[RMDB]
RNA sequence: GGGAACGACUCGAGUAGAGUCGAAAACUCCCCUCAAAAUCGUUUCAGUCCAAAAUUGAUUCGGCGGCCCUGUCAUGAGGCCGAAACGAAGGCACGUACCCCUUCGAAUGGCGUCGGUGAGUCAGCGAAAGCACUGACCCUUUCGAGGGUCAGUGAAUCAAUGUUAGAGCUUCGGCUCUAACAUUGAAAAAGAAACAACAACAACAAC
Reactivity to 2A3 in 0.01 (KOAc 150mM, MgCl2 10mM, bicine 150mM(pH8.5), 24C), signal-to-noise 2, nucleotides 027 to 156: c010u030c000c010c010c010u110c070a130a160a090a140u100c060g000u050u040u000c070a120g030u020c070c040a000a070a180a120u110u090g020a090u060u080c020g000g000c000g010g000c000c010c000u070g000u130c020a080u080g010a050g010g070c010c000g000a010a000a000c000g000a000a030g000g020c130a000c190g080u110a050c000c000c010c010u020u030c030g040a050a050u040g000g010c020g040u030c010g060g040u060g020a050g070u060c060a000g000c020g080a080a020a060g070c010a000c000u000g000a000c000c020c000u040u040u110c180g120a000g020g000g010u000c010a010g000u000g000a000a000
Reactivity to DMS in 0.01 (KOAc 150mM, MgCl2 10mM, bicine 150mM(pH8.5), 24C), signal-to-noise 1, nucleotides 027 to 156: c060u000c020c000c040c100u000c030a020a110a130a080u000c030g000u000u000u000c030a050g000u000c030c060a080a070a140a190u000u000g020a110u000u000c030g010g050c010g040g050c000c000c020u000g060u000c090a100u000g000a030g020g000c000c010g020a020a070a090c040g000a120a030g000g010c050a100c060g000u000a150c050c040c000c020u020u020c050g020a090a100u000g040g010c060g020u000c010g020g020u000g000a100g000u000c090a000g000c010g010a120a080a150g000c020a080c020u000g030a050c010c000c000u000u010u000c200g040a050g010g000g040u000c000a000g010u000g060a060a110